Source information: The record gives the reactivity of an RNA of 207 nucleotides to 2A3. Conditions: 150 mM KOAc, 10 mM MgCl2 and 150 mM bicine (pH 8.5), 24 C. For 2A3 the reverse transcriptase was SuperScript II with manganese.
RNA sequence: GGGAACGACUCGAGUAGAGUCGAAAAUGGCGCUUCGGCGCCACAUAACUCCUAAGUCUGAUAGAGGCUUGAGGGAGAUGGUGUCGGAAACGACACACAUCUUUGAUCUCAAGCUCCCCACCUAUCAGAUAUGGAAUAAUCACUCGUUCGCGAGUAACCAAUCAGUUAGCUUCGGCUAACUGAUUGGAAAAGAAACAACAACAACAAC
Reactivity to 2A3 in 0.01 (KOAc 150mM, MgCl2 10mM, bicine 150mM(pH8.5), 24C), signal-to-noise 2, nucleotides 027 to 156: u070g010g000c020g000c010u050u070c260g150g000c000g000c060c000a000c000a000u030a000a010c010u060c010c000u030a130a020g010u000c000u000g000a010u000a010g010a020g000g010c000u000u000g000a010g000g020g030a020g010a000u010g000g000u000g010u000c000g000g010a020a070a120c020g020a000c000a000c060a050c000a000u000c000u300u100u070g110a110u020c000u000c010a000a000g000c000u010c010c000c020c000a030c000c000u000a000u000c000a000g000a010u020a020u030g000g030a040a060u100a140a110u280c080a020c010u000c010g050u070u030c150g030c010g140a000g080u130a030a050